[RMDB]
RNA sequence: GGGAACGACUCGAGUAGAGUCGAAAAGAAUUAGCUGCCGACUCAUUCACCCACAUGCCAAGCAAGAAACGCUUGAGAUAGCGAAGCUUAGCAGAUGAGUGAAUGAAGCGGGAGGUAACGUUCCGAUGAGUAAGAGUAUUUUCGAAUACUCUUACUCAAAAGAAACAACAACAACAAC
Reactivity to 2A3 in 0.01 (KOAc 150mM, MgCl2 10mM, bicine 150mM(pH8.5), 24C), signal-to-noise 9, nucleotides 027 to 126: g030a010a080u040u020a030g040c000u070g110c010c000g140a190c010u000c000a000u000u000c000a000c000c010c000a020c010a030u020g000c000c010a000a000g000c010a090a040g100a220a200a030c010g000c000u030u040g020a030g020a070u140a010g000c010g030a060a010g000c000u000u010a000g000c010a010g020a150u030g000a010g010u000g000a000a000u010g010a030a000g010c010g010g010g010a010g040g030u030a030a010c030g010u020u010c000c010g020a110u080
Reactivity to DMS in 0.01 (KOAc 150mM, MgCl2 10mM, bicine 150mM(pH8.5), 24C), signal-to-noise 9, nucleotides 027 to 126: g000a060a130u000u000a020g000c000u000g000c010c000g010a050c020u000c000a010u000u000c000a010c000c010c010a010c300a140u010g000c000c030a010a000g020c000a190a130g010a160a130a200c010g000c000u000u010g000a200g010a110u010a000g000c010g000a090a170g000c000u000u000a070g010c010a000g010a180u000g000a060g010u000g000a010a000u000g000a010a030g010c010g000g000g000a000g000g000u010a010a020c080g000u010u000c000c000g010a270u010